[RMDB]
RNA sequence: GGGAACGACUCGAGUAGAGUCGAAAAGGCUGCUCUCCUGAUGAGCCGAUGGCAGGGCGAAACCAGUGUGGUACGGUAUGGCGAGGCUUGCCUCGGAGCCAAGCGGGAGGGCUUCCGGGGCGCCGCACGAGCGCAGUGUUGCGCGAGACUCUAGGCCGAUUAAUUCUCUGUUCGCAGAGAAUUAAUCAAAAGAAACAACAACAACAAC
Reactivity to 2A3 in 0.01 (KOAc 150mM, MgCl2 10mM, bicine 150mM(pH8.5), 24C), signal-to-noise 4, nucleotides 027 to 156: g040g000c030u030g000c010u030c010u040c030c020u100g060a170u080g040a060g040c020c010g060a090u170g020g010c040a020g020g030g020c020g060a080a030a030c020c030a050g040u060g030u060g150g060u100a070c070g030g030u100a090u080g040g010c040g030a050g010g050c040u060u130g000c010c000u000c000g000g000a020g040c020c000a070a020g060c040g020g010g010a020g040g000g000c000u090u020c000c010g000g000g000g000c000g000c000c000g000c010a020c040g070a070g040c020g000c080a060g040u090g060u290u080g030c020g000c010g010a030g010a020c020u000c030u100a050g040g050c040c020
Reactivity to DMS in 0.01 (KOAc 150mM, MgCl2 10mM, bicine 150mM(pH8.5), 24C), signal-to-noise 1, nucleotides 027 to 156: g000g040c020u000g010c010u010c020u000c040c040u000g040a140u010g010a150g040c000c030g020a090u010g010g050c020a090g030g010g040c070g000a090a100a090c000c010a070g030u030g030u000g090g050u000a060c090g020g060u010a070u010g050g000c040g010a230g000g000c000u000u000g040c010c000u020c000g020g000a050g000c000c010a060a150g000c050g030g000g010a100g030g020g030c020u000u000c020c000g000g010g010g030c000g030c040c000g000c020a080c090g010a130g000c040g050c030a180g020u000g020u000u000g030c020g030c040g000a140g000a020c040u000c020u010a110g010g030c100c090